[RMDB]
RNA sequence: GGGAACGACUCGAGUAGAGUCGAAAAACUGCCAUACGUGGCAGAAACACGCCUUAUCAGGACUAAACAGCGUGUCUAAAAAACAGUCCUUCAUACCUGAUCUGGAGGGUAGAUCAGGAAUACUAAAAAAAUCGGGUGAAGUUCGCUUCACCCGAAACAACUUACCGACCUUCGGGUCGGUAAGUUGAAAAGAAACAACAACAACAAC
Reactivity to 2A3 in 0.01 (KOAc 150mM, MgCl2 10mM, bicine 150mM(pH8.5), 24C), signal-to-noise 2, nucleotides 027 to 156: a000c000u010g000c020c000a040u050a040c220g110u050g010g020c000a000g000a020a000a000c000a000c000g000c020c030u040u020a020u070c130a020g000g000a000c020u070a150a010a000c010a000g000c010g020u000g010u080c170u050a000a020a040a010a000a000c050a000g000u000c020c000u060u040c050a070u050a130c000c000u000g000a000u010c010u020g040g040a080g110g050g050u080a010g000a000u000c000a000g000g050a010a000u080a040c100u170a050a040a000a010a000a000a070u030c010g020g050g010u000g000a020a000g010u020u090c150g060c130u010u010c000a000c000c030c000g000a000a000a000
Overview:
The record gives the reactivity of an RNA of 207 nucleotides to 2A3. Source: RMDB library M2RFOK, as collected in RNAgym. The RNA was probed in 150 mM KOAc, 10 mM MgCl2 and 150 mM bicine (pH 8.5) at 24 C. 2A3 adducts were read by reverse transcription with SuperScript II with manganese.